[RMDB]
RNA sequence: GGGAACGACUCGAGUAGAGUCGAAAACCGUCCCUCGGUAAUGGCGAAUGGGACCCAGAACUCUCUCUAGAUUCCCAGAGAGAAUCGAGAGAAAACUGGCUCUCCCUUAGCCAUCCGAGUAGGACGUCGGCACACCUCUUCGGAGGUGUGAAAAGAAACAACAACAACAAC
Reactivity to DMS in 0.01 (KOAc 150mM, MgCl2 10mM, bicine 150mM(pH8.5), 24C), signal-to-noise 6, nucleotides 027 to 129: c080c010g000u020c020c020c010u020c030g000g000u030a000a070u000g010g030c000g000a110a080u010g020g030g040a050c230c010c000a020g030a100a250c140u000c000u010c010u020c010u060a150g020a050u020u010c020c030c100a220g000a040g010a160g010a080a000u030c020g000a020g000a040g060a010a030a110a220c010u000g000g070c030u030c060u030c000c000c000u000u010a210g000c000c000a010u030c020c010g020a000g000u000a080g000g000a020c020g020u040c090g040g040
Reactivity to 2A3 in 0.01 (KOAc 150mM, MgCl2 10mM, bicine 150mM(pH8.5), 24C), signal-to-noise 6, nucleotides 027 to 129: c020c010g010u000c000c000c000u000c000g010g010u100a110a030u010g000g000c000g030a050a060u050g000g000g010a090c140c000c000a030g020a110a070c020u000c000u010c000u010c010u060a080g010a020u000u010c010c040c170a060g060a010g000a010g000a120a000u010c010g000a010g000a000g000a000a040a010a030c000u000g000g000c000u000c000u000c000c000c000u010u010a000g000c000c000a000u000c010c000g000a000g000u010a040g000g000a010c010g030u110c040g090g020
Chemical mapping of a 170-nucleotide RNA with DMS and 2A3.
The DMS profile rests on 29,249 reads.
The 2A3 profile rests on 44,821 reads.
The RNA was probed in 150 mM KOAc, 10 mM MgCl2 and 150 mM bicine (pH 8.5) at 24 C.